[RMDB]
RNA sequence: GGGAACGACUCGAGUAGAGUCGAAAACAUGCUACAGAGUACAGAGAGUAUAUGGAAGCAUAUAAUCUUGUCUCUGCAUCAGGUUUCCGCCUUUGGUGUUAUAAGACCUUUGAUAUUUAUAAUCUCUCACGCUACCGCUUCGGCGGUAGCAAAAGAAACAACAACAACAAC
Reactivity to DMS in 0.01 (KOAc 150mM, MgCl2 10mM, bicine 150mM(pH8.5), 24C), signal-to-noise 3, nucleotides 027 to 129: c000a040u020g030c140u020a080c060a050g010a000g020u160a090c000a070g100a000g020a040g060u000a030u060a000u020g030g110a060a040g030c060a000u020a010u020a000a000u030c000u010u010g010u020c020u040c020u020g050c130a000u020c040a020g020g030u000u020u040c050c010g000c030c140u010u000u030g010g020u060g030u000u000a100u010a090a080g030a120c080c110u030u050u130g040a100u020a020u090u080u040a120u040a050a020u070c060u020c070u030c090a060c250
Reactivity to 2A3 in 0.01 (KOAc 150mM, MgCl2 10mM, bicine 150mM(pH8.5), 24C), signal-to-noise 3, nucleotides 027 to 129: c070a030u050g000c000u020a050c040a010g030a000g050u140a010c040a000g230a000g000a020g080u010a000u000a000u000g030g040a090a010g120c000a000u020a000u000a030a030u010c000u040u020g030u000c000u000c000u000g000c000a070u080c020a000g010g000u000u060u000c010c040g050c010c000u080u040u120g000g000u030g040u080u090a030u040a050a050g050a060c000c000u020u090u140g100a070u050a090u120u300u040a140u070a140a120u060c050u010c000u010c030a030c030